[RMDB]
RNA sequence: GGGAACGACUCGAGUAGAGUCGAAAACGACAGCUUUUCGAAGCUGUCGAUUGGCAAAGGCUAGGACCGGCCAGACAAAGGUCCGAUAGCAAAUCGUUACGAAGCUCGCCUGCUUCGGCAGGCGAAAGCAUUGAAUUGACUUCGGUCAAUUCAAUGCAAAAGAAACAACAACAACAAC
Reactivity to DMS in 0.01 (KOAc 150mM, MgCl2 10mM, bicine 150mM(pH8.5), 24C), signal-to-noise 1, nucleotides 027 to 126: c000g020a010c000a000g000c000u000u010u010u020c160g000a010a030g020c000u030g010u000c000g000a000u020u020g010g000c110a110a120a130g040g000c010u000a150g010g000a030c000c000g000g040c010c010a080g000a160c200a030a070a070g000g010u000c010c000g000a110u000a030g010c050a040a050a060u000c090g000u000u010a090c030g000a070a050g040c030u000c020g020c010c000u000g010c000u010u000c120g000g010c010a000g000g020c000g000a000a020a040

An RNA of 177 nucleotides, treated with DMS and read out base by base. The DMS profile rests on 1,174 reads. Source: RMDB library M2PK50, as collected in RNAgym.